[RMDB]
RNA sequence: GGGAACGACUCGAGUAGAGUCGAAAAUCUGCAUCUAUUGAGAUAAUCAUGUGGUUUUUGUCUUUGGUUCUGUUUAUAUGCUGGAUUACAUUUAUUGAUUUGCGUAUAUUGAACCAGCCUUGCAUCCCAGGCAUGAAGCAAACCGAAUCCAGCAGCACCACAACUUUCAGUUCGCUGAAAGUUGUGGAAAAGAAACAACAACAACAAC
Reactivity to 2A3 in 0.01 (KOAc 150mM, MgCl2 10mM, bicine 150mM(pH8.5), 24C), signal-to-noise 1, nucleotides 027 to 156: u000c040u130g060c060a000u000c010u140a150u210u210g100a110g000a050u210a110a040u190c040a060u110g000u020g040g110u020u020u000u140u150g020u020c050u050u000u060g000g000u010u010c050u040g120u050u270u000a030u040a010u020g000c000u010g030g000a000u010u050a060c010a130u090u170u300a220u060u220g040a050u030u000u030g000c020g030u040a030u040a050u300u150g000a000a000c000c000a000g000c000c000u010u040g070c000a070u100c000c000c000a000g000g000c020a020u210g010a070a040g030c030a000a000a000c060c000g040a010a000u000c000c000a000g030c000a000g000c000a000

The data come from the RNA Mapping Database (RMDB), library OK3TST. Structure probing data (2A3) for a 207-nucleotide construct. The reactions ran in a buffer of 150 mM KOAc, 10 mM MgCl2 and 150 mM bicine (pH 8.5), at 24 C. The 2A3 profile rests on 475 reads.